[RMDB]
RNA sequence: GGGAACGACUCGAGUAGAGUCGAAAACGCUGGGCGUACGCAACCGAUAGAAGACAUGCUGAAGCGCGCACGGCAACAGCUUUCAUCGGUUGAAACGCCUGUGCUGAAGCGCGCACGGCAACCGAAAGGUGCGAUGGAGCAGGGUUCGCCCUGCUAAGAGCACUUCUAGUUUCGACUAGAAGUGCUCAAAAGAAACAACAACAACAAC
Reactivity to 2A3 in 0.01 (KOAc 150mM, MgCl2 10mM, bicine 150mM(pH8.5), 24C), signal-to-noise 4, nucleotides 027 to 156: c050g000c010u040g010g000g000c000g010u050a030c210g030c030a000a010c000c000g000a010u080a120g100a070a020g070a090c080a110u160g000c010u040g020a170a080g030c050g000c030g020c080a060c070g110g010c010a050a060c050a130g040c030u060u130u080c020a020u020c020g050g000u050u030g010a040a040a000c010g000c010c000u010g000u050g000c020u060g020a090a040g020c020g000c000g000c020a010c020g030g000c030a000a100c040c020g050a110a040a050g050g010u020g000c010g020a050u130g090g070a030g000c000a000g010g020g000u080u120c130g140c000c000c000u000g000c000u020a060a060
Reactivity to DMS in 0.01 (KOAc 150mM, MgCl2 10mM, bicine 150mM(pH8.5), 24C), signal-to-noise 2, nucleotides 027 to 156: c080g040c010u000g000g020g020c010g020u000a100c150g000c020a030a030c020c000g040a100u000a090g010a100a090g030a080c040a210u000g020c000u000g010a180a080g030c040g060c050g010c010a300c060g020g000c000a050a120c090a070g010c000u000u000u000c010a030u000c040g010g000u020u000g000a040a150a030c030g000c000c000u000g000u010g000c000u000g030a100a090g020c010g030c020g030c010a300c020g000g010c020a010a170c010c000g020a070a140a140g020g020u010g030c020g030a190u000g050g010a100g000c000a000g000g000g010u000u000c130g010c010c000c000u000g000c010u000a000a100